Structure probing data (2A3 and DMS) for a 207-nucleotide construct. For 2A3 the reverse transcriptase was SuperScript II with manganese. For 2A3, 1,764 sequencing reads were counted.
RNA sequence: GGGAACGACUCGAGUAGAGUCGAAAACGCCAGAAAUGGUAGAGGAUGACACUAUUAAUGCAAGAAAUGAGUAUCUAUAUCUUAAGAAGCAGGAUGUUUACAACAUCAUGUACGAUGUUACCGCUGCUACGACGCAGUUGGAAUCCGCGGGAGAAUAUACGCUUACAAAUUUCGAUUUGUAAGCGUAAAAAGAAACAACAACAACAAC
Reactivity to 2A3 in 0.01 (KOAc 150mM, MgCl2 10mM, bicine 150mM(pH8.5), 24C), signal-to-noise 3, nucleotides 027 to 156: c020g050c020c000a010g050a010a100a020u100g050g010u050a050g000a020g050g010a040u080g030a030c010a020c110u100a060u190u110a130a030u140g040c040a050a060g040a110a100a010u150g010a070g040u030a020u020c020u040a060u010a020u140c040u070u090a160a030g040a070a010g040c020a030g040g050a020u020g020u050u180u120a110c090a130a000c000a030u020c000a020u120g020u070a030c080g000a050u010g010u020u020a030c000c020g040c010u010g030c040u050a050c080g060a050c040g010c010a030g010u150u170g050g020a020a020u000c020c010g000c040g020g010g000a040g010a000a000u100a020
Reactivity to DMS in 0.01 (KOAc 150mM, MgCl2 10mM, bicine 150mM(pH8.5), 24C), signal-to-noise 3, nucleotides 027 to 156: c090g020c020c010a080g020a120a160a190u000g020g040u000a100g000a160g020g020a100u000g010a090c040a070c030u000a100u010u010a070a110u010g040c050a120a100g020a060a080a080u010g010a140g010u000a130u000c050u030a100u000a070u000c040u010u000a050a120g020a070a150g010c040a050g010g020a020u010g020u000u000u010a120c090a100a110c010a040u000c030a080u010g040u000a090c090g010a050u000g020u000u000a140c030c020g020c010u000g000c020u000a070c050g020a060c010g020c010a070g000u010u020g020g010a060a050u000c030c040g060c050g000g030g000a090g010a070a080u000a230
The RNA was probed in 150 mM KOAc, 10 mM MgCl2 and 150 mM bicine (pH 8.5) at 24 C.